[RMDB]
RNA sequence: GGGAACGACUCGAGUAGAGUCGAAAAUAACGGAUAGCAAAACAAAAUUAGAAAGUGAUAGAGGUAGACUUCUAGCCGCUGGUAAGGAUGAUAUAUUCGAAUUCAAAUGUGUGGAUUUCGGCGCCUAUUUUAUAGCUAUGCGAUUGGAUAAGAAAACGAUUAUAUCUGCAUUCGUGCAGAUAUAAUCAAAAGAAACAACAACAACAAC
Reactivity to DMS in 0.01 (KOAc 150mM, MgCl2 10mM, bicine 150mM(pH8.5), 24C), signal-to-noise 2, nucleotides 027 to 156: u000a080a160c060g020g020a090u000a020g020c010a100a080a130a300c100a080a090a080a150u000u030a080g010a140a050a080g010u010g000a100u010a070g010a080g010g010u000a080g010a060c040u000u000c040u000a080g030c000c030g070c000u130g000g030u000a060a120g020g020a070u000g010a120u000a060u000a110u000u000c030g020a110a120u000u000c070a030a070a100u010g030u000g070u000g020g010a140u000u010u000c060g080g060c040g000c040c020u000a070u000u010u000u010a080u010a100g010c030u000a080u000g020c000g000a110u010u010g000g020a100u020a050a180g020a080a080a110a060c190
Reactivity to 2A3 in 0.01 (KOAc 150mM, MgCl2 10mM, bicine 150mM(pH8.5), 24C), signal-to-noise 3, nucleotides 027 to 156: u060a030a010c030g020g010a010u030a030g080c020a000a050a050a060c030a030a080a120a080u200u120a070g110a120a080a010g030u050g030a070u070a060g030a020g000g060u060a050g020a070c020u030u010c010u060a040g030c050c030g020c040u040g020g020u100a060a030g010g010a010u060g050a010u050a010u060a040u120u110c040g020a030a010u070u010c040a070a100a170u080g090u030g020u040g070g000a010u010u100u100c030g010g010c020g010c000c000u030a070u030u070u010u070a100u080a030g000c010u000a000u080g010c000g030a050u060u110g010g020a040u050a130a090g060a080a080a010a020c050